RNA sequence: GGGAACGACUCGAGUAGAGUCGAAAAGUGUCUUUCGAGACACACAUAGGGCCGUCAGGGUUCUCCCGCCCUCCGUGAACCCAGGCUAAAAGUUAAGGUAGGGGGGCAGAAGUGCAGUUCGCUGCACGUCGUAGCUUUAGUUCGCUAAAGCUACGACAAAAGAAACAACAACAACAAC
Reactivity to DMS in 0.01 (KOAc 150mM, MgCl2 10mM, bicine 150mM(pH8.5), 24C), signal-to-noise 1, nucleotides 027 to 126: g010u000g020u000c000u000u000u040c170g040a030g020a030c000a020c010a110c140a140u010a170g000g010g010c000c020g040u000c140a120g040g000g000u000u000c010u000c020c070c040g000c000c000c000u020c000c010g040u000g000a050a030c000c000c000a200g020g000c020u000a050a050a050a130g010u020u000a170a070g010g010u000a060g020g010g000g000g000g000c010a120g000a040a130g010u030g000c000a010g000u000u010c270g040c020u000g000c020a010c000
Reactivity to 2A3 in 0.01 (KOAc 150mM, MgCl2 10mM, bicine 150mM(pH8.5), 24C), signal-to-noise 3, nucleotides 027 to 126: g000u000g000u020c010u020u090u140c190g070a000g000a010c010a000c000a000c000a090u200a150g040g050g060c050c030g060u100c110a050g020g020g000u000u030c000u010c020c020c020g020c000c000c010u000c010c000g040u020g010a000a010c010c000c010a000g000g020c010u050a090a070a020a040g090u160u170a100a040g090g050u080a030g010g050g000g000g000g010c000a000g050a180a000g000u010g010c000a000g010u050u080c130g060c070u010g000c000a010c020